Structure probing data (DMS and 2A3) for a 207-nucleotide construct. It was measured as part of the RMDB library OK3TST. Conditions: 150 mM KOAc, 10 mM MgCl2 and 150 mM bicine (pH 8.5), 24 C. DMS adducts were read by reverse transcription with MarathonRT.

[RMDB]
RNA sequence: GGGAACGACUCGAGUAGAGUCGAAAAUAACUUAUGACCUAACAAGCUAUUUUCUGAUACCAAUUUACGUAUAUGAAUCUGAAAGUUUUACAUGCUGGUAGGGAAAAUUUGUCAAGAUACAUGUUUAAGUGGGAGUGAGGGCAAACUGCAGAGCAGGCGCUCACCUAUAGUUCGCUAUAGGUGAGCGAAAAGAAACAACAACAACAAC
Reactivity to DMS in 0.01 (KOAc 150mM, MgCl2 10mM, bicine 150mM(pH8.5), 24C), signal-to-noise 1, nucleotides 027 to 156: u010a010a040c040u000u000a020u010g000a220c120c100u000a090a060c030a050a020g010c060u000a040u000u000u000u000c020u010g030a190u000a060c030c010a100a140u010u000u020a080c080g040u000a090u000a070u010g000a020a070u010c060u000g000a060a070a150g000u020u000u030u000a080c040a080u010g000c050u030g000g000u000a050g000g010g020a070a050a060a070u000u000u000g010u010c030a060a120g020a190u000a030c070a050u000g010u000u010u010a050a060g030u010g000g000g000a090g030u000g010a080g000g000g030c020a050a010a020c050u000g020c030a130g000a090g010c050a100g000g020
Reactivity to 2A3 in 0.01 (KOAc 150mM, MgCl2 10mM, bicine 150mM(pH8.5), 24C), signal-to-noise 3, nucleotides 027 to 156: u070a020a010c050u080u080a000u180g070a040c030c010u050a080a050c050a040a070g050c020u070a050u070u080u050u050c020u060g080a090u050a090c060c010a120a060u110u130u170a120c070g050u040a040u030a030u210g070a050a040u050c030u030g050a080a090a020g020u020u050u160u170a040c060a030u160g010c060u020g000g040u050a030g010g010g070a020a040a040a130u080u130u110g080u110c070a040a000g010a060u070a040c050a030u050g070u070u080u070a050a020g020u070g020g040g000a020g010u050g020a050g000g010g030c010a060a110a030c000u030g010c040a000g010a000g010c000a020g070g000